This 177-nucleotide RNA was probed chemically with DMS and 2A3. Values cover nucleotides 27 to 126. The DMS profile rests on 887 reads. The reactions ran in a buffer of 150 mM KOAc, 10 mM MgCl2 and 150 mM bicine (pH 8.5), at 24 C.
RNA sequence: GGGAACGACUCGAGUAGAGUCGAAAAGAUAUGGACCAGGUGGGAGCAACUCUCGGAAACGAGAGAAUUGCAUCGAUCACCGUCCUAAGUCAAAACCCACAUGGAGAGUUCGCUCUCCAUGUGGGAAGGCCUAAUUUAUCUUCGGAUAAAUUAGGCCAAAAGAAACAACAACAACAAC
Reactivity to DMS in 0.01 (KOAc 150mM, MgCl2 10mM, bicine 150mM(pH8.5), 24C), signal-to-noise 1, nucleotides 027 to 126: g000a000u000a200u000g000g000a040c030c110a200g030g010u000g050g020g010a080g030c000a040a070c000u000c000u010c000g010g000a000a050a050c010g000a010g000a000g000a060a050u000u000g010c000a300u000c140g000a040u010c020a010c010c000g010u000c000c000u010a000a050g000u010c000a070a100a170a150c000c000c000a000c000a000u000g010g000a010g010a030g000u000u030c250g030c000u000c000u010c010c010a010u000g000u000g010g000g000a000a020
Reactivity to 2A3 in 0.01 (KOAc 150mM, MgCl2 10mM, bicine 150mM(pH8.5), 24C), signal-to-noise 1, nucleotides 027 to 126: g000a000u030a000u030g000g000a050c110c240a120g020g000u000g010g000g010a030g030c000a020a010c000u020c020u010c000g020g000a040a030a010c020g000a000g020a010g000a070a110u100u020g000c000a070u300c010g020a000u050c000a000c000c000g000u000c000c000u000a050a010g010u020c010a020a030a140a280c000c010c000a000c030a000u000g020g000a010g000a010g020u090u200c240g090c160u050c010u000c000c000a000u010g000u000g000g020g000a020a040